[RMDB]
RNA sequence: GGGAACGACUCGAGUAGAGUCGAAAAGGAAUCGACAGUAGAGUUUAUCAUGUCAGUAAGCAUGCCGGGGAAUGGUGGUUUACCCCGUUAUCAAAUGAUUACCGACCAAUAAUUGGCGAAACUCGUUAGGCCCGUCCACACUUCGGUGUGGACGGAAACAGCAUGUAUCUUUCGAGAUACAUGCUGUAAAAGAAACAACAACAACAAC
Reactivity to 2A3 in 0.01 (KOAc 150mM, MgCl2 10mM, bicine 150mM(pH8.5), 24C), signal-to-noise 7, nucleotides 027 to 156: g060g020a060a060u080c060g040a030c050a030g060u110a030g040a020g040u070u040u040a130u110c060a050u080g040u040c040a020g060u080a060a010g030c020a010u040g050c040c010g010g000g000g000a030a050u060g030g020u030g000g030u050u040u130a090c000c010c000c000g020u040u040a070u090c040a030a070a050u040g020a010u040u040a040c020c030g050a060c020c030a030a010u180a130a060u090u060g030g000c030g020a050a020a050c040u040c030g050u030u040a050g050g040c000c010c000g000u000c000c000a000c000a000c000u040u060c180g050g000u000g000u000g000g000a000c000g000g000a000a010
Reactivity to DMS in 0.01 (KOAc 150mM, MgCl2 10mM, bicine 150mM(pH8.5), 24C), signal-to-noise 4, nucleotides 027 to 156: g000g010a100a080u000c020g020a040c030a070g010u000a090g010a280g020u000u000u000a070u000c040a100u010g010u010c020a040g010u010a010a090g000c010a030u000g010c180c020g030g000g010g000a060a130u000g020g030u000g000g030u000u000u000a300c010c000c000c000g020u000u000a060u000c180a090a090a060u010g000a060u000u000a020c010c000g010a020c020c080a090a120u000a050a100u010u000g020g020c030g000a100a090a050c030u000c030g020u000u000a080g010g020c090c010c000g010u000c000c000a020c000a020c000u000u000c270g000g010u000g030u010g010g000a000c010g000g000a010a040